[RMDB]
RNA sequence: GGGAACGACUCGAGUAGAGUCGAAAAGAUAUGGACGCUACAUGCGCUUGGACCGCUUUCGGAAACGAAAGCGCUAGCGUGAAUGUGAGCGUCCUAAGUCAAAAGCGGAUUGGUUCGCCAAUCCGCACGGACAUUGACUCUUCGGAGUCAAUGUCCGAAAAGAAACAACAACAACAAC
Reactivity to DMS in 0.01 (KOAc 150mM, MgCl2 10mM, bicine 150mM(pH8.5), 24C), signal-to-noise 1, nucleotides 027 to 126: g010a050u000a300u010g000g000a000c000g010c000u000a020c000a000u000g010c020g010c010u000u000g040g010a130c300c030g010c000u000u000u010c000g000g010a090a130a270c000g020a000a000a000g040c030g010c010u000a000g010c000g030u020g020a120a000u000g000u000g000a080g000c000g000u000c000c000u020a000a080g010u000c020a110a100a070a160g030c000g000g020a020u000u000g010g000u010u020c250g070c000c000a000a000u000c000c000g050c000a010
Reactivity to 2A3 in 0.01 (KOAc 150mM, MgCl2 10mM, bicine 150mM(pH8.5), 24C), signal-to-noise 1, nucleotides 027 to 126: g030a020u050a030u280g020g010a000c000g000c020u000a020c010a020u010g000c020g020c020u120u150g070g110a210c110c150g030c020u000u060u030c020g020g000a030a070a080c040g010a020a000a000g040c000g000c000u000a000g010c010g000u040g160a100a090u070g030u210g110a110g000c000g000u000c000c010u000a010a010g000u010c000a000a000a090a090g000c010g000g000a020u020u020g010g130u060u210c300g000c120c000a000a020u000c000c000g000c010a000